[RMDB]
RNA sequence: GGGAACGACUCGAGUAGAGUCGAAAAGUUCACGCUCCGAAAUAACUCGCAGGCAUCUGCGGUUUUGAGCUCAAGGCAGCGGCUCAGACCAAAGUCAUGGACGAGAGUAAAUUUUAACGAAGCGUAUGCGGAUAACUGGAACGAGUUCAACAGAUCGGCCUAACAUAGAUUUCGAUCUAUGUUAGGCAAAAGAAACAACAACAACAAC
Reactivity to 2A3 in 0.01 (KOAc 150mM, MgCl2 10mM, bicine 150mM(pH8.5), 24C), signal-to-noise 4, nucleotides 027 to 156: g020u050u070c060a000c050g000c000u010c030c010g040a020a060a110u110a040a050c010u010c030g070c170a060g080g000c030a080u030c060u030g020c000g010g000u010u030u040u060g010a000g000c010u020c060a060a120g120g030c030a020g040c060g040g000c010u010c010a000g020a010c030c000a050a050a020g050u120c060a050u040g040g070a060c020g000a010g000a010g050u070a010a090a080u100u110u030u090a110a040c030g030a010a000g000c000g020u040a050u110g030c020g000g050a030u030a150a070c020u050g010g050a060a030c040g020a020g020u110u090c050a060a070c020a070g000a070u030c040g060
Reactivity to DMS in 0.01 (KOAc 150mM, MgCl2 10mM, bicine 150mM(pH8.5), 24C), signal-to-noise 3, nucleotides 027 to 156: g000u010u000c030a080c000g010c000u000c020c000g000a170a130a090u010a060a080c020u000c040g000c020a060g030g000c100a070u000c020u010g020c300g030g030u010u000u010u020g010a030g030c000u000c030a070a150g020g020c110a050g010c240g020g010c000u000c000a040g010a030c010c030a050a190a100g000u000c040a060u010g000g000a140c080g000a070g000a120g040u010a040a030a170u000u000u000u000a090a200c060g040a060a050g000c030g020u000a100u010g010c020g000g010a120u010a040a090c050u000g010g000a060a130c070g000a110g010u000u020c000a050a080c040a070g010a130u010c080g020

Source: RMDB library OK3TST, as collected in RNAgym.
The record gives the reactivity of an RNA of 207 nucleotides to 2A3 and DMS.
2A3 adducts were read by reverse transcription with SuperScript II with manganese.